RNA sequence: GGGAACGACUCGAGUAGAGUCGAAAAUGUGUCUCCUUCGGGAGACACAAACGCUCGCAGCCCGAGGCCGCACGGGCAAGGCAGCGGCCAGCCAGCGAGGUAUGUGUUAUCAAUUCGUUGAUAACAAAAGAAGGAAGGAUUUCGAUCCUUCCUUCUUAAAAGAAACAACAACAACAAC
Reactivity to DMS in 0.01 (KOAc 150mM, MgCl2 10mM, bicine 150mM(pH8.5), 24C), signal-to-noise 3, nucleotides 027 to 126: u020g020u000g010u010c000u000c000c000u010u020c220g010g000g000a010g000a000c000a010c000a000a040a070c250g000c010u010c050g030c010a120g010c020c020c010g000a090g010g000c010c010g010c020a100c100g010g010g030c150a050a080g000g030c100a120g000c030g010g010c010c010a080g000c060c090a190g010c010g000a020g000g030u020a020u020g010u010g010u000u020a000u000c000a000a030u000u010c200g010u000u000g000a020u000a000a000c000a070a050
Reactivity to 2A3 in 0.01 (KOAc 150mM, MgCl2 10mM, bicine 150mM(pH8.5), 24C), signal-to-noise 2, nucleotides 027 to 126: u060g000u000g010u000c000u010c020c020u020u060c150g090g030g000a000g000a030c010a000c000a000a000a010c000g040c000u020c010g050c000a040g050c000c000c010g010a050g000g000c000c000g060c030a060c090g120g130g000c080a060a100g110g000c030a060g010c010g000g000c000c010a020g020c040c030a010g000c000g010a020g030g000u180a200u190g190u020g010u020u020a010u010c000a010a000u090u070c190g010u090u000g000a030u000a020a000c030a000a110

This 177-nucleotide RNA was probed chemically with DMS and 2A3. DMS adducts were read by reverse transcription with MarathonRT. Conditions: 150 mM KOAc, 10 mM MgCl2 and 150 mM bicine (pH 8.5), 24 C. For 2A3 the reverse transcriptase was SuperScript II with manganese.